[RMDB]
RNA sequence: GGGAACGACUCGAGUAGAGUCGAAAACGAACCGAUCACUUUUUCACCGCUUCACUACCGACGCGCGACAUAUUUGAUCCUGCCCUCAUCACCCGCUCCCGCAGGAGCCAGCGUCAAGGUGGAAGGAGACUCGGGUAAUCUUCGGAUUACCCGAGUCAAAAGAAACAACAACAACAAC
Reactivity to 2A3 in 0.01 (KOAc 150mM, MgCl2 10mM, bicine 150mM(pH8.5), 24C), signal-to-noise 1, nucleotides 027 to 126: c020g020a040a000c020c000g050a120u130c030a130c140u100u050u050u230u220c060a070c030c030g000c110u110u090c040a030c050u150a020c000c020g030a100c060g000c010g010c020g150a060c060a000u300a180u150u250u250g070a080u020c000c030u000g000c020c000c000u070c020a090u020c010a070c030c000c030g020c110u000c020c000c000g010c020a000g020g060a000g100c010c020a000g000c000g020u020c010a040a060g000g000u000g000g110a020a010g040g040a040
This 177-nucleotide RNA was probed chemically with 2A3. For 2A3 the reverse transcriptase was SuperScript II with manganese. Reactivities are rounded to 0.1 and cut off at 0 and 3. The reactions ran in a buffer of 150 mM KOAc, 10 mM MgCl2 and 150 mM bicine (pH 8.5), at 24 C. Reactivities are given for positions 27 through 126. The 2A3 profile rests on 634 reads.